[RMDB]
This 177-nucleotide RNA was probed chemically with DMS and 2A3. The DMS profile rests on 644 reads. The reactions ran in a buffer of 150 mM KOAc, 10 mM MgCl2 and 150 mM bicine (pH 8.5), at 24 C.

RNA sequence: GGGAACGACUCGAGUAGAGUCGAAAAACAUCAAUUAGAAGGUGCACGCCCACUUUCGGCUGACUAUGUAGACAGUCGAAGAUGAUCUGGACAACAUAGUGACUAGCUUACUUGUCGACCUGACUGCCCGUACCACGGGAUUCGUCCCGUGGUACGGAAAAGAAACAACAACAACAAC
Reactivity to DMS in 0.01 (KOAc 150mM, MgCl2 10mM, bicine 150mM(pH8.5), 24C), signal-to-noise 1, nucleotides 027 to 126: a100c050a030u000c000a110a210u000u000a150g050a110a170g000g020u000g000c060a130c170g010c010c000c010a030c170u000u000u000c020g010g000c000u020g000a110c000u000a110u000g010u000a070g070a160c070a020g030u000c000g000a030a020g000a140u000g000a080u000c080u000g010g000a140c140a020a070c070a050u000a040g000u000g000a090c080u000a030g000c080u010u020a070c150u000u000g020u000c040g000a010c010c010u010g000a110c080u000g010c200
Reactivity to 2A3 in 0.01 (KOAc 150mM, MgCl2 10mM, bicine 150mM(pH8.5), 24C), signal-to-noise 2, nucleotides 027 to 126: a000c020a060u060c000a000a160u200u110a180g090a260a090g030g000u020g000c020a000c050g030c020c030c030a020c040u040u070u040c000g020g000c010u050g020a040c020u010a010u300g120u040a050g020a070c010a000g050u000c040g030a010a020g030a120u170g020a060u000c040u090g010g000a010c010a020a000c000a090u150a020g080u100g110a090c080u070a000g110c030u030u070a060c020u040u030g010u040c020g040a080c010c000u050g090a130c010u100g070c010